RNA sequence: GGGAACGACUCGAGUAGAGUCGAAAAUCGACAGGAGCUGUGUCAGCUUGGAGAGAGGGAUGACAGGGAGGGGCAGGCUGGCCAUUGGAAGGUGCUAUCGGCUGCACCUGGCAUGGUGCCUAUGGGAGCGGUUGCCCAGAGUGGCUGGAGUCCCCAAGAUUUAAUGGCAUUUCGAUGCCAUUAAAUCAAAAGAAACAACAACAACAAC
Reactivity to 2A3 in 0.01 (KOAc 150mM, MgCl2 10mM, bicine 150mM(pH8.5), 24C), signal-to-noise 1, nucleotides 027 to 156: u050c000g010a020c030a050g080g100a020g050c030u060g020u030g140u180c020a020g010c070u110u100g010g010a040g010a000g020a010g000g000g000a010u110g010a030c050a130g080g030g040a090g020g000g010g050c020a010g070g070c020u000g040g050c020c000a000u010u020g100g010a050a060g030g010u020g040c080u070a000u150c010g110g000c030u030g000c030a030c030c040u030g040g000c020a160u030g060g020u140g040c000c000u090a070u070g010g000g010a040g000c080g100g000u070u010g020c000c000c010a050g010a010g050u070g020g060c000u000g040g000a030g050u080c000c000c000c000a060a000

Structure probing data (2A3) for a 207-nucleotide construct. 2A3 adducts were read by reverse transcription with SuperScript II with manganese. Conditions: 150 mM KOAc, 10 mM MgCl2 and 150 mM bicine (pH 8.5), 24 C.